[RMDB]
RNA sequence: GGGAACGACUCGAGUAGAGUCGAAAAUCUUUGUGCAAUACCCAGCGGCGGAUGGCUCUAUUUUUGACUAUGGUCAUUUAGCUGCUACAGCACGCUCUUUUAAUAUGCACGUCGUAGCUGCCACCGAUUUACUAGCUCUCACUAUUUUGAAAUCGCAGUCGUGCAUUAGUUUCGACUAAUGCACGACAAAAGAAACAACAACAACAAC
Reactivity to 2A3 in 0.01 (KOAc 150mM, MgCl2 10mM, bicine 150mM(pH8.5), 24C), signal-to-noise 3, nucleotides 027 to 156: u070c070u020u100u110g000u010g010c030a100a120u070a300c000c020c020a000g010c000g020g000c000g000g000a020u050g000g000c020u010c020u180a230u130u180u000u180u300g130a080c040u070a120u220g030g000u000c000a000u010u030u090a110g000c010u000g000c010u030a010c020a060g000c000a010c020g040c010u020c030u150u140u110u070a100a170u180a100u210g020c020a020c070g110u090c070g100u120a030g000c020u030g060c010c010a000c000c010g040a070u120u020u040a050c050u030a030g010c000u000c010u000c040a020c040u070a120u080u120u030u090g170a130a250a070u250c120g000c100a020